RNA sequence: GGGAACGACUCGAGUAGAGUCGAAAAGUCACGGUUUGCCGUAGUAAUCUGUGCUAUUCUACUUGUUUAGGAUAAUACAGAUCGGAGCAUUUAAUAUCACAGAUUUUUAUGCCACCAAGGACGAGUGCCUAAAUCUCCUUUUCGAAGGAGAUUUAGGAAAAGAAACAACAACAACAAC
Reactivity to 2A3 in 0.01 (KOAc 150mM, MgCl2 10mM, bicine 150mM(pH8.5), 24C), signal-to-noise 4, nucleotides 027 to 126: g020u000c010a010c070g030g050u050u140u170g060c020c020g020u060a040g060u020a040a040u000c000u000g010u000g000c010u010a010u030u020c020u030a050c040u080u160g040u130u190u060a040g040g000a010u020a060a040u070a110c040a000g080a060u000c020g060g040a050g000c010a000u070u100u100a100a040u090a020u090c020a040c030a160g040a040u010u010u000u070u090a050u080g000c000c000a050c030c000a050a020g080g000a010c030g040a040g070u140g050
Reactivity to DMS in 0.01 (KOAc 150mM, MgCl2 10mM, bicine 150mM(pH8.5), 24C), signal-to-noise 4, nucleotides 027 to 126: g010u010c030a090c110g010g010u000u000u010g010c040c030g010u010a090g010u000a080a040u000c000u010g010u000g020c080u000a000u000u000c060u010a030c080u010u000g010u010u010u000a040g000g000a000u000a030a050u000a040c090a040g000a030u010c040g010g010a230g020c010a020u000u010u000a050a060u000a060u000c040a090c110a120g000a040u010u000u000u000u000a020u010g000c040c120a060c010c020a080a110g000g000a040c040g000a120g020u010g000